[RMDB]
About this RNA
An RNA of 177 nucleotides, treated with 2A3 and DMS and read out base by base. The RNA was probed in 150 mM KOAc, 10 mM MgCl2 and 150 mM bicine (pH 8.5) at 24 C. The DMS profile rests on 2,006 reads. DMS adducts were read by reverse transcription with MarathonRT.
RNA sequence: GGGAACGACUCGAGUAGAGUCGAAAAGGUUCAAUAUUCGCCGAAGAAGCGCCUACGUAGGCCAAGUCAUUCGUACACAUUGAGAAUUCGCCGGAAGGGCCCAGGGGAAAGCGAUAUGGACAGCGCCGAACAACACGGGAUUCGUCCCGUGUUGUUCAAAAGAAACAACAACAACAAC
Reactivity to 2A3 in 0.01 (KOAc 150mM, MgCl2 10mM, bicine 150mM(pH8.5), 24C), signal-to-noise 4, nucleotides 027 to 126: g070g000u020u020c030a040a040u030a080u220u070c070g020c050c050g040a110a020g050a080a020g050c090g040c020c010u090a080c130g060u110a030g020g000c010c000a070a020g080u070c030a050u150u030c060g040u120a060c080a020c040a100u070u200g050a070g030a100a080u070u050c020g020c000c020g000g100a060a050g020g020g010c000c020c010a030g030g000g000g030a040a080a000g050c070g020a060u060a090u130g010g010a010c010a030g000c010g020c030c020
Reactivity to DMS in 0.01 (KOAc 150mM, MgCl2 10mM, bicine 150mM(pH8.5), 24C), signal-to-noise 2, nucleotides 027 to 126: g000g000u030u000c000a120a040u020a100u000u000c050g000c060c060g020a140a070g000a100a090g030c130g000c010c020u020a060c270g030u040a110g000g000c010c070a070a070g000u020c060a040u010u000c030g060u030a110c140a100c150a120u000u030g020a120g010a130a150u010u020c160g000c030c040g000g050a050a030g000g030g000c000c000c020a030g010g010g000g000a000a120a100g000c100g000a020u010a070u020g020g020a040c030a090g000c040g000c050c000